[RMDB]
The data come from the RNA Mapping Database (RMDB), library M2PK50. The record gives the reactivity of an RNA of 177 nucleotides to DMS and 2A3. The 2A3 profile rests on 12,108 reads. Conditions: 150 mM KOAc, 10 mM MgCl2 and 150 mM bicine (pH 8.5), 24 C.
RNA sequence: GGGAACGACUCGAGUAGAGUCGAAAAGUGAGAACGUUCGCGUUCUCACAAAUACUAAGACCGAAGCUUAGAUGGCCGACACUUCCCUAGGAAACGGCACAAAAAUGAUAGGUUUCGACCUAUCAAAGUUGUUAAGAACUUUCGAGUUCUUAACAACAAAAGAAACAACAACAACAAC
Reactivity to DMS in 0.01 (KOAc 150mM, MgCl2 10mM, bicine 150mM(pH8.5), 24C), signal-to-noise 4, nucleotides 027 to 126: g010u000g000a020g010a020a020c010g000u000u020c200g050c020g010u000u000c000u000c000a000c000a040a050a060u010a120c080u000a020a030g010a220c070c100g010a070a120g000c010u000u000a020g000a130u010g020g000c000c010g000a090c100a100c110u000u000c000c000c000u000a150g010g010a120a080a100c010g000g000c010a090c190a030a050a070a100a050u000g000a010u000a000g010g010u000u000u000c230g000a040c000c000u000a010u000c000a030a040a110
Reactivity to 2A3 in 0.01 (KOAc 150mM, MgCl2 10mM, bicine 150mM(pH8.5), 24C), signal-to-noise 3, nucleotides 027 to 126: g000u000g000a010g000a010a000c020g020u040u070c180g010c000g120u000u000c020u000c000a000c000a000a010a000u080a010c010u020a000a030g020a040c030c130g180a100a010g040c010u030u040a000g020a080u090g110g000c010c000g030a020c020a010c090u030u020c000c010c000u020a030g070g000a040a110a020c010g010g010c070a010c030a150a090a020a030a040u090g000a000u000a000g020g040u030u050u080c190g080a030c000c000u000a000u000c000a020a000a000